[RMDB]
Notes: The record gives the reactivity of an RNA of 207 nucleotides to 2A3 and DMS. For 2A3, 3,957 sequencing reads were counted. As a SHAPE reagent, 2A3 marks flexible, mostly unpaired nucleotides at the ribose 2'-OH. Values are in units of 0.01, from 0 to 300, in steps of 10. Conditions: 150 mM KOAc, 10 mM MgCl2 and 150 mM bicine (pH 8.5), 24 C.

RNA sequence: GGGAACGACUCGAGUAGAGUCGAAAAGAAUCACCGUACCUAUUGAGGUUUACGCUCCAAGAUCGGUGGAUAGCAGCCCUAUCAAUAUCUAGGAGAACUGUGCUAUGUUUAGAAGAUUAGGUAGUCUAUUACACAGCCAUGUUCGCAUGGCUGUGAACGUAAUUAAUAGGUUCGCCUAUUAAUUACGAAAAGAAACAACAACAACAAC
Reactivity to 2A3 in 0.01 (KOAc 150mM, MgCl2 10mM, bicine 150mM(pH8.5), 24C), signal-to-noise 3, nucleotides 027 to 156: g040a010a050u120c000a010c020c010g010u060a040c000c010u100a140u170u190g090a050g010g030u060u090u080a060c030g000c010u000c010c010a030a010g010a050u040c020g000g030u030g020g050a020u050a030g080c080a020g040c020c000c000u040a050u080c060a080a050u040a030u180c030u050a030g010g020a060g010a070a070c060u060g010u030g060c010u050a030u150g080u050u060u040a120g020a180a060g010a120u120u070a050g120g000u010a010g050u000c030u040a100u050u120a050c000a000c000a010g000c000c000a000u010g020u030u040c130g010c100a000u000g000g000c000u000g000u000g000a000a000
Reactivity to DMS in 0.01 (KOAc 150mM, MgCl2 10mM, bicine 150mM(pH8.5), 24C), signal-to-noise 3, nucleotides 027 to 156: g030a130a150u010c010a120c010c000g020u000a060c020c020u000a160u010u010g000a050g020g020u000u000u010a130c160g000c000u000c010c030a100a080g000a030u000c030g010g010u010g000g010a110u000a080g020c040a090g040c060c040c000u000a140u010c030a060a110u000a040u010c090u000a070g020g010a100g010a060a090c030u000g020u020g010c040u000a090u000g030u000u010u010a120g010a100a110g010a110u000u000a050g010g040u000a060g020u000c070u000a090u000u010a170c010a010c000a010g000c000c010a010u010g000u000u010c300g040c010a030u000g010g020c010u000g020u000g000a040a080